[RMDB]
RNA sequence: GGGAACGACUCGAGUAGAGUCGAAAACUUUUAAACAAUUAGGAUAUGCCUUAGAGACUGGGCCUAAUUGCAGGCUAUAGUAUGCAGUGGUCCUAUGUUUAGCACCGUGUUCCUGAUUAUUACAUUCAUGAACAAACAAAGUGAAAGGUUUAGUGUAUACGAUUACUCGUUUCGACGAGUAAUCGUAAAAAGAAACAACAACAACAAC
Reactivity to 2A3 in 0.01 (KOAc 150mM, MgCl2 10mM, bicine 150mM(pH8.5), 24C), signal-to-noise 2, nucleotides 027 to 156: c010u130u060u080u090a000a080a020c040a040a130u100u080a030g000g020a020u050a050u240g000c020c040u030u090a050g010a000g030a090c040u070g000g030g000c000c010u110a220a130u120u180g050c080a040g000g000c000u020a030u040a300g000u060a050u190g030c060a020g000u010g060g000u050c000c010u040a060u150g030u000u030u040a080g000c030a000c020c030g050u000g000u080u000c000c000u000g000a000u000u220a010u020u240a060c040a070u000u000c000a000u050g060a020a000c000a040a110a040c060a110a070a010g040u140g110a080a060a000g110g010u070u090u180a050g000u040g040u040a030
Reactivity to DMS in 0.01 (KOAc 150mM, MgCl2 10mM, bicine 150mM(pH8.5), 24C), signal-to-noise 1, nucleotides 027 to 156: c040u000u010u000u010a070a100a060c040a020a120u000u000a010g010g000a080u000a070u000g000c060c090u000u000a150g000a090g020a080c060u000g000g040g050c010c020u010a010a090u010u000g020c170a120g020g010c050u000a070u000a110g030u000a070u000g020c050a050g010u010g040g010u000c030c000u000a060u000g000u000u000u000a090g010c010a080c000c090g000u000g020u000u000c010c030u020g010a060u000u000a130u000u010a130c190a150u000u000c010a030u000g000a020a090c000a020a050a090c110a070a080a110g020u010g000a060a080a050g010g000u000u000u000a100g000u010g040u010a260

The data come from the RNA Mapping Database (RMDB), library OK3TST.
An RNA of 207 nucleotides, treated with 2A3 and DMS and read out base by base.
For 2A3, 737 sequencing reads were counted.
Values are in units of 0.01, from 0 to 300, in steps of 10.
DMS (dimethyl sulfate) methylates the pairing face of unpaired adenines and cytosines.
The reactions ran in a buffer of 150 mM KOAc, 10 mM MgCl2 and 150 mM bicine (pH 8.5), at 24 C.
The DMS profile rests on 2,536 reads.